The record gives the reactivity of an RNA of 170 nucleotides to 2A3 and DMS. Values cover nucleotides 27 to 129. The DMS profile rests on 84,772 reads. The data come from the RNA Mapping Database (RMDB), library 15KLIB. Conditions: 150 mM KOAc, 10 mM MgCl2 and 150 mM bicine (pH 8.5), 24 C.
RNA sequence: GGGAACGACUCGAGUAGAGUCGAAAACCCUGUCUCCUCGGUUCUUCUUCGAUCCGGACCGGCUCAUCUCGGCAAAAGGCGGCAGUCCUCAGUACUCUUACUCUUUCCUAUAAAGAGGAGACUGCUGGUAGCGAAUGAUUCGUCAUUCGCAAAAGAAACAACAACAACAAC
Reactivity to 2A3 in 0.01 (KOAc 150mM, MgCl2 10mM, bicine 150mM(pH8.5), 24C), signal-to-noise 9, nucleotides 027 to 129: c000c000c000u000g020u000c010u000c000c000u010c010g030g000u060u030c020u090u010c020u070u090c060g060a080u010c020c020g010g040a060c020c010g010g000c010u010c020a100u010c030u010c010g020g000c020a050a070a020a040g040g000c000g010g000c010a020g030u040c000c010u020c010a020g030u050a110c020u010c010u060u070a250c000u030c000u030u110u030c040c030u130a130u160a220a060a000g010a010g000g010a010g010a000c010u010g020c010u030g020g120u100a020
Reactivity to DMS in 0.01 (KOAc 150mM, MgCl2 10mM, bicine 150mM(pH8.5), 24C), signal-to-noise 9, nucleotides 027 to 129: c030c010c010u030g020u020c000u000c000c030u030c030g000g010u000u030c030u010u010c070u060u040c050g020a060u040c040c030g000g000a080c070c010g050g000c010u020c060a080u010c000u000c020g000g050c070a040a040a070a060g020g030c000g000g040c070a020g020u000c030c030u000c030a090g000u000a040c090u020c030u000u030a170c000u020c030u020u030u020c130c130u020a110u100a070a050a020g000a020g040g000a020g000a050c000u040g000c000u030g020g040u060a130